This 207-nucleotide RNA was probed chemically with 2A3 and DMS. For DMS, 1,749 sequencing reads were counted.

RNA sequence: GGGAACGACUCGAGUAGAGUCGAAAAAGGAGCAUUAGCCAGACCUCAGCGUAUGGAUAACCUAUCAUAUGCGGACGCCACUUGCAUGCGAAAGGAUGGCAGGAUGGGAAAGCAUGCUUCGAAGCGGUUGGCGUACGGAAACCAUCCCGCCUGACUGAACUAUGCUUGGUUUCGACCAAGCAUAGUUAAAAGAAACAACAACAACAAC
Reactivity to 2A3 in 0.01 (KOAc 150mM, MgCl2 10mM, bicine 150mM(pH8.5), 24C), signal-to-noise 2, nucleotides 027 to 156: a000g100g000a050g040c050a120u070u190a030g010c000c010a040g090a210c000c020u140c110a030g000c010g030u030a020u020g000g030a030u080a140a150c030c050u040a030u060c030a050u060a010u050g030c030g030g010a010c000g030c010c000a010c010u030u120g000c010a010u000g000c020g030a130a010a020g110g050a120u130g000g000c010a000g000g010a020u010g030g060g050a000a140a000g000c010a000u020g040c000u100u080c090g060a100a060g020c070g040g030u150u140g060g000c040g000u030a040c010g130g000a070a010a050c000c000a000u000c000c000c030g030c000c000u030g010a060c060u040g010
Reactivity to DMS in 0.01 (KOAc 150mM, MgCl2 10mM, bicine 150mM(pH8.5), 24C), signal-to-noise 1, nucleotides 027 to 156: a080g000g020a070g030c040a090u000u010a160g030c020c030a110g010a100c010c060u010c120a110g010c030g050u000a050u030g010g000a170u000a080a150c090c150u010a220u010c020a060u000a040u000g040c010g030g060a050c040g060c010c030a050c100u000u000g020c010a010u010g050c070g060a040a170a170g000g000a110u010g000g030c010a000g010g000a040u010g000g020g000a070a130a180g010c030a020u010g010c020u010u060c000g030a080a190g020c080g080g010u010u000g060g040c030g020u000a140c060g010g060a120a050a090c030c000a030u000c010c000c010g070c000c000u000g020a100c080u000g010
About this RNA:
The RNA was probed in 150 mM KOAc, 10 mM MgCl2 and 150 mM bicine (pH 8.5) at 24 C.